Chemical mapping of a 207-nucleotide RNA with 2A3. The data come from the RNA Mapping Database (RMDB), library OK3TST. The reactions ran in a buffer of 150 mM KOAc, 10 mM MgCl2 and 150 mM bicine (pH 8.5), at 24 C.

RNA sequence: GGGAACGACUCGAGUAGAGUCGAAAAGCUUAUCAUCUUUGACUUCAAAGCCACUUAGACGAAUCAUCUUGGUUGCCAAAUCAACGAUCUUCACUGACUUGCCCAUAUCGAGCACAAACACAUCACCGCCUUUACCCAUAGCACCAGCUUGGAUCACGGCGCAUAGCCUAUUCGUAGGCUAUGCGCCAAAAGAAACAACAACAACAAC
Reactivity to 2A3 in 0.01 (KOAc 150mM, MgCl2 10mM, bicine 150mM(pH8.5), 24C), signal-to-noise 1, nucleotides 027 to 156: g000c010u160u050a120u230c050a120u000c050u010u060u070g070a080c020u130u090c040a110a030a000g000c000c040a050c000u050u020a040g020a030c030g030a020a070u130c010a000u050c010u030u030g050g060u010u020g110c040c070a000a050a210u160c020a000a000c130g000a050u000c020u040u060c050a090c100u020g120a030c040u100u010g010c000c000c040a000u050a050u120c130g020a010g100c040a000c070a030a070a040c090a020c000a050u100c050a010c010c010g060c010c000u050u110u090a160c180c000c010a070u090a090g040c050a000c050c000a020g010c020u020u050g000g000a050u030c130a040c100